[RMDB]
An RNA of 177 nucleotides, treated with 2A3 and DMS and read out base by base. The reactions ran in a buffer of 150 mM KOAc, 10 mM MgCl2 and 150 mM bicine (pH 8.5), at 24 C. The 2A3 profile rests on 1,231 reads. It was measured as part of the RMDB library M2PK90.
RNA sequence: GGGAACGACUCGAGUAGAGUCGAAAAGGAAAGCACAUGAAGCACGCGAUGCACGGCAAGCACAUGAAGCACUACAAGCAGUACAAGCAGCGCAAGCAGUAGAAGCAGCCGAAGCAGUACAAAAAAAGUCAGUAGAUAUCUUCGGAUAUCUACUGACAAAAGAAACAACAACAACAAC
Reactivity to 2A3 in 0.01 (KOAc 150mM, MgCl2 10mM, bicine 150mM(pH8.5), 24C), signal-to-noise 1, nucleotides 027 to 126: g020g000a140a000a020g010c030a040c000a080u070g060a100a020g010c050a010c070g000c000g050a060u050g020c040a020c150g010g000c030a020a000g000c000a020c000a050u090g040a080a000g030c020a030c060u080a040c040a060a080g000c050a010g020u030a040c020a070a030g100c020a000g040c020g000c070a080a020g000c000a010g020u120a010g000a070a020g010c010a000g010c000c010g010a020a020g000c040a000g000u090a080c120a010a160a000a020a000a000a040
Reactivity to DMS in 0.01 (KOAc 150mM, MgCl2 10mM, bicine 150mM(pH8.5), 24C), signal-to-noise 2, nucleotides 027 to 126: g000g000a090a040a090g000c040a050c050a080u000g000a080a100g000c050a060c090g020c050g000a090u000g010c000a070c070g000g010c040a060a050g010c090a040c040a030u000g040a040a120g030c020a070c060u000a030c100a060a090g020c030a050g040u000a060c110a110a120g030c070a030g010c090g010c060a030a030g000c050a040g020u000a030g000a100a070g030c050a080g000c030c030g000a070a030g000c000a000g010u000a060c130a000a000a050a040a060a040a130